Record summary: Structure probing data (DMS and 2A3) for a 177-nucleotide construct. The reactions ran in a buffer of 150 mM KOAc, 10 mM MgCl2 and 150 mM bicine (pH 8.5), at 24 C. It was measured as part of the RMDB library TTRDEL. DMS adducts were read by reverse transcription with MarathonRT. For DMS, 899 sequencing reads were counted.
RNA sequence: GGGAACGACUCGAGUAGAGUCGAAAAGAUAUGGACCCAUUGUAGCUUUUGACGCUCCUUCGGAAACGAAGAGCGAUAAGCUACGUGGGUCCUAAGUCAAACAUGAUUGUGUUCGCACAAUCAUGAACCCUACAAUGGCCUUCGGGCCAUUGUAGGGAAAAGAAACAACAACAACAAC
Reactivity to DMS in 0.01 (KOAc 150mM, MgCl2 10mM, bicine 150mM(pH8.5), 24C), signal-to-noise 1, nucleotides 027 to 126: g000a020u010a300u010g000g000a000c020c000c000a050u000u020g030u000a010g000c000u000u020u010u000g020a290c050g020c010u000c230c090u000u000c000g020g000a110a090a200c010g000a010a020g020a040g000c010g020a050u020a010a000g000c000u000a000c000g010u000g000g000g040u000c000c000u000a000a020g010u000c050a140a100a280c010a010u000g010a010u000u000g050u000g020u000u020c290g030c000a010c000a050a000u000c000a000u000g000a010a130
Reactivity to 2A3 in 0.01 (KOAc 150mM, MgCl2 10mM, bicine 150mM(pH8.5), 24C), signal-to-noise 1, nucleotides 027 to 126: g020a010u060a040u120g000g000a010c030c010c000a030u220u300g000u000a000g020c010u070u070u060u300g140a070c100g000c010u160c040c070u000u040c010g030g020a090a080a030c010g010a010a030g010a000g000c000g000a000u010a070a000g000c010u010a000c000g030u000g000g000g000u040c000c030u000a000a010g000u010c000a000a000a060c000a000u010g000a000u010u010g000u010g000u000u070c120g020c130a000c010a000a000u030c000a000u020g010a010a010